This 177-nucleotide RNA was probed chemically with 2A3.
Conditions: 150 mM KOAc, 10 mM MgCl2 and 150 mM bicine (pH 8.5), 24 C.
It was measured as part of the RMDB libraries RFM100 and RFMREP.
RNA sequence: GGGAACGACUCGAGUAGAGUCGAAAACAUUUUGGCAUUCUGUCCACCUCCAUAAAUCUAAGAUCACUUCUUGGUGUCCAAUAUUUCUGGUCUUUGUUGGAGGUGGCCAGCAUGUCAAACUGGCUCUACCAACUCCAUACUUCGGUAUGGAGUUGGUAAAAGAAACAACAACAACAAC
Reactivity to 2A3 in 0.01 (KOAc 150mM, MgCl2 10mM, bicine 150mM(pH8.5), 24C), signal-to-noise 4, nucleotides 027 to 126: c000a000u010u010u000u000g000g000c010a010u010u010c000u000g000u010c000c000a000c000c000u000c000c000a040u080a090a190a070u110c050u050a010a000g000a000u010c010a000c060u070u030c020u080u050g030g050u250g150u200c090c020a070a040u050a040u070u100u030c100u050g000g010u010c010u010u030u070g040u030u030g010g010a000g010g010u000g000g000c010c000a000g000c000a000u000g010u000c000a000a000a000c000u000g010g010c000u000c000u010